[RMDB]
RNA sequence: GGGAACGACUCGAGUAGAGUCGAAAAGGUCCAGGGUACCGCCUGGACUGGUACACCUUUGGGCGGUGAAGGUCCUGGUUAGGCCCGCGAAAGGCGCGUGUUAGGCGGGCCUAUGCGCGCCAAAGAAGCAUCUCGCUAGGUUCGCCUGGCGAGGUGCAAAAGAAACAACAACAACAAC
Reactivity to DMS in 0.01 (KOAc 150mM, MgCl2 10mM, bicine 150mM(pH8.5), 24C), signal-to-noise 8, nucleotides 027 to 126: g010g010u010c000c000a030g000g000g010u030a080c190c200g000c010c000u000g000g000a010c020u000g000g000u020a110c130a100c030c020u000u020u030g000g000g030c050g000g010u010g000a140a110g010g000u010c010c020u010g000g010u000u010a090g010g020c010c000c020g000c110g020a070a120a100g010g000c000g010c040g000u000g000u020u010a050g010g000c060g010g010g000c000c010u000a000u000g000c000g010c030g000c010c010a030a090a070g000a150a140
Reactivity to 2A3 in 0.01 (KOAc 150mM, MgCl2 10mM, bicine 150mM(pH8.5), 24C), signal-to-noise 7, nucleotides 027 to 126: g030g000u010c000c000a000g040g010g010u120a120c040c060g040c040c000u000g000g010a010c000u000g000g010u080a040c020a060c020c000u040u070u040g060g020g010c040g020g010u080g070a070a020g070g000u030c000c010u010g030g000u040u070a070g020g030c000c010c010g010c030g060a110a070a030g040g000c020g000c010g010u070g090u100u050a040g050g000c090g010g070g020c000c000u000a000u000g000c010g000c000g020c000c000a030a080a020g070a040a020